[RMDB]
About this RNA
This 177-nucleotide RNA was probed chemically with 2A3 and DMS. DMS adducts were read by reverse transcription with MarathonRT. It was measured as part of the RMDB library OK2TRN. The 2A3 profile rests on 1,141 reads. The reactions ran in a buffer of 150 mM KOAc, 10 mM MgCl2 and 150 mM bicine (pH 8.5), at 24 C.

RNA sequence: GGGAACGACUCGAGUAGAGUCGAAAAAUCUGUUCAGGAAAAAUAAUGGUGAACUGCGAAUCGAAUCCAGACACGGCGAGUUCCUGGUGAAGAACACAUGCACACUCAAGAUGCAUCCAGUCGAGGGCAAUACGGUCACGUUCGCGUGACCGUAUUGAAAAGAAACAACAACAACAAC
Reactivity to 2A3 in 0.01 (KOAc 150mM, MgCl2 10mM, bicine 150mM(pH8.5), 24C), signal-to-noise 1, nucleotides 027 to 126: a000u030c050u050g050u080u050c020a040g080g180a070a000a020a070a030u230a100a080u160g050g020u040g070a060a030c020u030g040c080g120a050a050u100c030g020a000a060u000c030c000a000g000a030c020a000c060g090g000c060g010a020g030u040u020c020c000u010g020g030u080g030a100a020g070a030a020c030a000c020a070u090g010c030a020c000a020c050u090c030a020a060g020a100u070g000c000a000u020c040c040a030g060u070c040g050a140g000g000g060
Reactivity to DMS in 0.01 (KOAc 150mM, MgCl2 10mM, bicine 150mM(pH8.5), 24C), signal-to-noise 3, nucleotides 027 to 126: a080u020c040u000g010u000u000c040a080g000g000a000a060a030a100a100u000a100a050u020g010g020u000g000a150a060c060u000g040c070g010a070a080u000c150g020a170a100u010c030c010a030g000a160c080a080c060g030g020c070g000a140g030u000u000c040c020u000g040g050u010g010a160a060g010a070a040c050a060c060a030u000g020c060a050c060a050c090u010c140a070a140g000a070u000g020c040a030u000c070c040a090g030u000c050g010a100g000g000g010